[RMDB]
Description: Structure probing data (DMS and 2A3) for a 207-nucleotide construct. The 2A3 profile rests on 2,195 reads. It was measured as part of the RMDB library OK3TST. DMS adducts were read by reverse transcription with MarathonRT.
RNA sequence: GGGAACGACUCGAGUAGAGUCGAAAAGGACCGGCUGAGGGGUCCGACAUAGCCUCAGCAUCUAGCCUGUCACUCACCAGGCGAAUCAAGUGAGUGUUGAUGCUUUUGCAUCUUAAUCUGACUGAGUCGUAGCAGUCUCAUGAACUAUGACCUUAGAGAUCCCUAUAAUCUUCGGAUUAUAGGGAUCAAAAGAAACAACAACAACAAC
Reactivity to DMS in 0.01 (KOAc 150mM, MgCl2 10mM, bicine 150mM(pH8.5), 24C), signal-to-noise 2, nucleotides 027 to 156: g010g000a100c020c020g050g000c050u010g000a020g030g010g010g010u000c070c020g020a090c100a090u000a150g030c020c030u020c020a060g020c000a110u000c110u000a200g000c000c010u010g010u000c020a090c020u000c000a030c040c000a030g060g030c000g020a060a070u000c110a050a110g050u000g010a060g050u000g020u010u000g020a070u000g010c010u010u020u000u000g030c010a130u000c020u000u000a090a260u010c070u000g010a140c080u000g010a120g020u000c030g040u000a050g010c020a130g020u010c090u000c180a090u070g000a090a090c020u000a030u000g010a010c000c020u010u000a030g020a280
Reactivity to 2A3 in 0.01 (KOAc 150mM, MgCl2 10mM, bicine 150mM(pH8.5), 24C), signal-to-noise 3, nucleotides 027 to 156: g020g000a000c000c000g010g020c000u000g000a000g000g010g000g010u000c010c020g010a000c020a090u150a020g100c000c000u000c000a000g020c010a010u090c040u060a030g000c000c000u020g020u080c000a000c010u000c000a010c000c000a000g010g030c080g040a050a100u170c080a140a020g010u010g000a000g000u000g020u030u050g000a010u000g000c020u090u230u240u300g000c010a000u000c000u020u120a150a100u090c160u110g000a000c010u000g000a000g020u000c000g000u000a000g000c010a000g020u000c070u050c130a130u210g040a040a000c000u000a010u020g010a010c000c010u020u040a050g020a000